[RMDB]
RNA sequence: GGGAACGACUCGAGUAGAGUCGAAAAAAGGCGUGUCUAUGGUUCCCUGUCUUUGGAUACGUAAGAACCGGAGGUAAAGAAAUGUGGACCUGAAGAAAUUUGGGGCCAGCUUGCUCCUCGCUGGCUCGACUAUACUACUCUUCGGAGUAGUAUAGUCAAAAGAAACAACAACAACAAC
Reactivity to DMS in 0.01 (KOAc 150mM, MgCl2 10mM, bicine 150mM(pH8.5), 24C), signal-to-noise 5, nucleotides 027 to 126: a060a070g010g010c020g020u000g010u000c020u000a090u000g010g010u000u000c010c010c010u000g010u010c060u000u000u010g010g010a050u000a020c040g010u010a130a120g000a070a060c040c020g010g000a040g010g010u010a070a050a050g010a040a060a070u000g020u000g000g000a050c010c010u000g000a030a050g010a100a090a170u000u000u000g020g010g000g000c010c000a020g010c020u000u000g010c080u000c010c020u000c080g010c030u000g020g000c020u000c040
Reactivity to 2A3 in 0.01 (KOAc 150mM, MgCl2 10mM, bicine 150mM(pH8.5), 24C), signal-to-noise 5, nucleotides 027 to 126: a010a000g090g000c030g000u040g000u000c020u030a120u120g040g000u030u040c000c010c020u010g090u020c060u050u110u110g040g000a030u020a070c020g020u040a070a060g050a070a030c030c010g020g030a010g000g000u060a090a050a030g050a030a120a050u180g030u070g030g030a020c000c020u030g040a050a010g030a060a140a060u100u110u120g010g000g010g000c000c000a000g010c010u010u070g010c010u020c020c010u000c010g070c050u050g000g010c000u010c020